[RMDB]
RNA sequence: GGGAACGACUCGAGUAGAGUCGAAAAUCAGGUUUCACAAGCACAUCAUUAUAGCGACUAUUAAAUCUAUCUACAAGGUUACGAGUCAAUUCGAUAUGCUGCUUUUGGUCAUCUCCAACUGGAACGACGUACCACCUUGAUUCGUCAAGGUGGUACGAAAAGAAACAACAACAACAAC
Reactivity to 2A3 in 0.01 (KOAc 150mM, MgCl2 10mM, bicine 150mM(pH8.5), 24C), signal-to-noise 7, nucleotides 027 to 126: u110c050a010g060g060u000u120u100c110a090c020a070a010g050c000a020c010a040u120c050a060u030u170a110u150a110g100c040g040a020c020u010a030u180u190a070a100a030u000c020u080a070u060c060u150a100c090a140a040g040g020u060u030a030c120g010a000g020u010c000a050a090u080u110c030g020a000u010a020u100g080c100u010g010c000u040u030u060u080g040g010u050c040a070u020c080u010c040c020a050a100c080u070g020g030a050a040c030g030a010
Reactivity to DMS in 0.01 (KOAc 150mM, MgCl2 10mM, bicine 150mM(pH8.5), 24C), signal-to-noise 3, nucleotides 027 to 126: u010c080a030g000g000u000u000u050c050a110c060a080a070g010c050a070c080a050u020c030a040u020u010a030u000a100g010c190g000a010c010u000a060u060u030a030a020a010u010c010u000a070u020c090u060a120c220a100a030g000g000u000u000a100c250g000a060g000u000c070a060a140u010u000c060g010a050u010a060u000g010c040u000g000c010u000u000u000u010g020g000u000c120a040u000c020u010c020c020a050a040c090u000g010g000a050a050c050g000a180
Structure probing data (2A3 and DMS) for a 177-nucleotide construct. DMS adducts were read by reverse transcription with MarathonRT. The reactions ran in a buffer of 150 mM KOAc, 10 mM MgCl2 and 150 mM bicine (pH 8.5), at 24 C. 2A3 adducts were read by reverse transcription with SuperScript II with manganese. The 2A3 profile rests on 4,914 reads.